[RMDB]
RNA sequence: GGGAACGACUCGAGUAGAGUCGAAAAACUAACUUUCUUGCAUUGACCCACUGCUCGAGGACUCCUUCUCUUCCCGCUCGGGAUUUCUUCGUCUCGGACCGGCUCAUCUUCGGCAAAGGGCGGCGGUCCUCAGUGCUCUUACUCUUUUCUGUAAAGACCGUUAAGAUUAGUUCGCUAAUCUUAACGGAAAAGAAACAACAACAACAAC
Reactivity to 2A3 in 0.01 (KOAc 150mM, MgCl2 10mM, bicine 150mM(pH8.5), 24C), signal-to-noise 4, nucleotides 027 to 156: a000c060u140a090a050c040u150u210u130c070u150u280g030c060a130u030u160g020a030c010c010c020a060c030u000g000c000u000c010g020a030g020g060a130c030u050c020c000u100u040c020u030c010u040u030c010c000c020g030c090u080c080g060g060g000a030u130u090u050c020u100u090c030g050u010c020u010c050g060g060a130c020c010g040g030c010u010c060a170u070c060u220u090c040g060g000c040a110a070a170g010g010g010c010g000g010c050g000g000u000c000c000u010c010a030g010u020g010c020u020c030u100u130a130c010u000c000u100u100u100u060c050u060g140u090a070a100a070g040a090
Structure probing data (2A3) for a 207-nucleotide construct. The 2A3 profile rests on 2,399 reads.